[RMDB]
RNA sequence: GGGAACGACUCGAGUAGAGUCGAAAACGAUAAGCAUUCGUGCUUAUCGACGGUACGAAAGUACAAAGGAGCAAAAGCAUCGGCUCCUUAAAACGAUGCAAAAGACAACGGGGUUCGCCCCGUUGAAUCAGUCCCUACAAUUCGUUGUAGGGACUGAAAAAGAAACAACAACAACAAC
Reactivity to DMS in 0.01 (KOAc 150mM, MgCl2 10mM, bicine 150mM(pH8.5), 24C), signal-to-noise 2, nucleotides 027 to 126: c020g000a020u000a000a000g020c000a040u000u020c200g000u000g000c000u000u000a010u000c010g040a050c250g020g000u000a010c000g000a170a150a180g000u000a010c020a140a110a220g000g020a000g010c000a050a050a070a090g030c000a010u000c000g010g000c000u000c000c000u000u000a000a020a010a110c000g010a010u000g000c000a110a100a110a090g000a190c030a000a000c000g000g000g000g040u010u000c230g000c010c000c010c000g010u000u000g000a050a080
Reactivity to 2A3 in 0.01 (KOAc 150mM, MgCl2 10mM, bicine 150mM(pH8.5), 24C), signal-to-noise 2, nucleotides 027 to 126: c000g010a010u000a010a000g010c010a020u030u110c210g100u040g000c000u000u000a010u010c000g000a010c020g050g000u000a000c010g060a150a030a020g010u010a010c020a030a190a090g000g000a010g000c020a050a170a160a030g010c000a010u010c010g000g010c010u000c000c000u020u050a010a020a000a010c000g010a000u000g000c000a000a080a010a070g150a020c010a000a000c010g000g000g010g010u020u060c110g200c000c010c020c000g000u010u000g010a010a030
Chemical mapping of a 177-nucleotide RNA with DMS and 2A3.
Source: RMDB library M2PK50, as collected in RNAgym.
Values cover nucleotides 27 to 126.
For DMS the reverse transcriptase was MarathonRT.
The reactions ran in a buffer of 150 mM KOAc, 10 mM MgCl2 and 150 mM bicine (pH 8.5), at 24 C.
For 2A3 the reverse transcriptase was SuperScript II with manganese.